[RMDB]
This 177-nucleotide RNA was probed chemically with DMS and 2A3. For 2A3, 1,599 sequencing reads were counted. Reactivities are given for positions 27 through 126. Conditions: 150 mM KOAc, 10 mM MgCl2 and 150 mM bicine (pH 8.5), 24 C. Source: RMDB library RFMREP, as collected in RNAgym. The DMS profile rests on 618 reads. For 2A3 the reverse transcriptase was SuperScript II with manganese.
RNA sequence: GGGAACGACUCGAGUAGAGUCGAAAACGCCCUAUGGCAAGGACGGGAUUCUGCCUAUCAGGCAUGAACUAAGCGGUCGCGUAGCGGCCACCUCCCCAUUUAUUGCAAUUGCUUCGCAAUUGUAAAAGUACUAUCCGUACUUCGGUACGGAUAGUACAAAAGAAACAACAACAACAAC
Reactivity to DMS in 0.01 (KOAc 150mM, MgCl2 10mM, bicine 150mM(pH8.5), 24C), signal-to-noise 1, nucleotides 027 to 126: c270g030c070c000c030u000a130u020g000g010c140a150a130g020g020a070c040g010g010g000a170u020u010c050u000g020c000c000u010a110u030c290a040g010g040c000a030u020g030a060a060c070u000a110a070g020c100g000g030u000c030g020c000g010u000a090g020c030g020g000c060c010a070c020c020u000c020c000c000c050a220u000u020u000a120u020u000g000c000a020a040u000u000g040c010u000u010c250g000c000a000a010u000u000g010u000a000a040a140a160
Reactivity to 2A3 in 0.01 (KOAc 150mM, MgCl2 10mM, bicine 150mM(pH8.5), 24C), signal-to-noise 2, nucleotides 027 to 126: c080g060c020c000c020u080a130u110g050g020c070a070a030g070g010a000c080g030g020g050a020u070u000c000u020g000c000c010u080a190u200c110a050g020g010c040a030u160g020a040a040c050u040a090a100g110c050g050g020u020c020g000c080g080u080a050g000c030g000g010c000c000a010c010c000u010c020c000c010c010a020u150u220u170a170u120u030g000c000a000a000u010u000g000c000u110u120c220g000c010a000a000u000u010g020u000a010a000a010a100